[RMDB]
Source: RMDB library OK3TST, as collected in RNAgym. Chemical mapping of a 207-nucleotide RNA with DMS and 2A3. For 2A3, 2,075 sequencing reads were counted. Reactivities are given for positions 27 through 156. DMS (dimethyl sulfate) methylates the pairing face of unpaired adenines and cytosines. Conditions: 150 mM KOAc, 10 mM MgCl2 and 150 mM bicine (pH 8.5), 24 C. For 2A3 the reverse transcriptase was SuperScript II with manganese.

RNA sequence: GGGAACGACUCGAGUAGAGUCGAAAAAUAUCGUCAUCCAGUACAACUACCAAAUGAGAGUGCCCAAAACCAUGGCAGCACUCCAGACAUUCCUGCCUCAGGUUGGUGCGUACGCCAAUGGCGACAACGAAUCUGAAUCAGGCGACCAGCCAGGUGCGUGCCAUACUAUGUUCGCAUAGUAUGGCACAAAAGAAACAACAACAACAAC
Reactivity to DMS in 0.01 (KOAc 150mM, MgCl2 10mM, bicine 150mM(pH8.5), 24C), signal-to-noise 1, nucleotides 027 to 156: a070u000a020u000c030g030u010c030a130u000c040c060a160g050u000a090c030a090a160c070u000a120c080c030a000a130a120u010g000a130g010a060g030u000g000c000c010c070a040a060a080a220c080c070a080u000g000g010c040a130g010c010a020c010u000c010c000a100g000a100c020a160u010u020c030c040u000g030c050c020u000c040a040g030g020u010u000g010g040u000g000c070g030u000a060c120g000c000c100a040a080u000g030g020c000g000a060c020a030a070c090g000a080a080u010c000u020g010a060a070u000c030a070g010g000c040g020a160c050c020a130g020c070c020a100g070g010u000g000c090
Reactivity to 2A3 in 0.01 (KOAc 150mM, MgCl2 10mM, bicine 150mM(pH8.5), 24C), signal-to-noise 4, nucleotides 027 to 156: a000u150a060u100c050g030u010c020a060u000c030c040a040g060u140a050c010a110a050c090u200a130c020c060a140a070a070u150g010a190g000a040g180u030g010c000c000c000a060a150a050a080c120c060a110u040g020g010c040a020g000c010a010c010u020c000c010a010g010a010c020a150u160u090c000c020u090g060c000c040u070c030a030g010g000u020u040g070g000u040g060c110g030u060a200c010g000c030c010a100a100u220g020g010c010g000a010c020a060a040c040g130a010a050u080c030u090g030a050a010u090c010a050g000g060c000g080a130c040c020a000g090c040c020a030g050g000u040g050c040